Structure probing data (2A3 and DMS) for a 177-nucleotide construct. The RNA was probed in 150 mM KOAc, 10 mM MgCl2 and 150 mM bicine (pH 8.5) at 24 C. The 2A3 profile rests on 1,011 reads.
RNA sequence: GGGAACGACUCGAGUAGAGUCGAAAAUCCAUCGCAUGCCAGUCAUCGUCCGCAUGGGCAGAUGGGCGGACAUGCAAUGAGCUCCUAUGUGCCGCACCGCCCACCACCACCCCCACAUCCGUCCAUAGUGCAGCAAAAUAUUCGUAUUUUGCUGCACAAAAGAAACAACAACAACAAC
Reactivity to 2A3 in 0.01 (KOAc 150mM, MgCl2 10mM, bicine 150mM(pH8.5), 24C), signal-to-noise 1, nucleotides 027 to 126: u000c010c010a040u060c020g070c000a000u000g010c010c000a050g080u030c010a020u010c060g010u040c000c020g100c180a220u290g000g010g100c040a030g020a040u040g010g220g170c010g000g000a100c030a020u070g070c000a020a100u120g030a010g020c040u030c020c030u170a130u160g070u070g030c030c040g030c040a090c010c010g030c000c000c000a000c040c000a000c000c010a010c000c000c000c030c000a030c010a010u070c030c020g080u000c000c000a020u060a100
Reactivity to DMS in 0.01 (KOAc 150mM, MgCl2 10mM, bicine 150mM(pH8.5), 24C), signal-to-noise 2, nucleotides 027 to 126: u000c050c000a030u010c080g010c020a050u000g010c020c000a140g020u000c010a050u000c020g020u000c000c020g010c300a130u020g010g020g010c000a070g050a010u000g020g000g040c040g020g010a050c030a010u000g010c000a050a050u000g000a090g030c090u000c010c050u000a050u000g000u000g010c010c080g000c050a120c070c030g000c040c020c010a100c050c030a030c070c040a250c040c020c030c030c010a100c170a050u010c040c070g020u000c020c060a080u000a090